The data come from the RNA Mapping Database (RMDB), library OK1LIB. This 177-nucleotide RNA was probed chemically with 2A3 and DMS. As a SHAPE reagent, 2A3 marks flexible, mostly unpaired nucleotides at the ribose 2'-OH.
RNA sequence: GGGAACGACUCGAGUAGAGUCGAAAACAUUGCAUAUCGAAGUGCAUCAUGAGGUCUGAGAUUGAUGCACGUUGACAUGCGUGGUAUCACUUUCUUAUGCGAGAGUGAGAAUAUGAAACCACAUCACGUUAAUACUAUAUUUCGAUAUAGUAUUAACAAAAGAAACAACAACAACAAC
Reactivity to 2A3 in 0.01 (KOAc 150mM, MgCl2 10mM, bicine 150mM(pH8.5), 24C), signal-to-noise 8, nucleotides 027 to 126: c010a030u050u140g000c000a000u000a000u000c010g030a070a000g000u000g000c000a000u000c000a000u010g040a010g060g200u090c070u090g090a040g000a060u000u010g000a000u000g000c000a000c000g000u010u020g000a000c000a000u010g000c000g000u000g010g000u010a010u020c000a000c000u010u020u000c010u030u190a080u150g100c070g000a000g000a000g000u010g000a010g010a010a010u160a000u030g050a040a010a020c000c000a000c000a040u070c040a010c060
Reactivity to DMS in 0.01 (KOAc 150mM, MgCl2 10mM, bicine 150mM(pH8.5), 24C), signal-to-noise 6, nucleotides 027 to 126: c040a140u020u020g020c000a010u010a110u000c000g000a030a030g020u000g000c000a000u000c010a000u000g000a200g040g010u030c210u050g000a210g000a120u000u000g010a010u000g010c000a000c010g010u000u010g010a010c080a000u000g000c000g000u000g000g000u000a070u000c000a000c010u000u000u000c000u010u040a090u020g010c200g010a000g000a020g000u000g000a020g010a080a060u010a000u010g010a070a050a070c000c000a020c070a170u040c190a090c190
The reactions ran in a buffer of 150 mM KOAc, 10 mM MgCl2 and 150 mM bicine (pH 8.5), at 24 C. For DMS the reverse transcriptase was MarathonRT.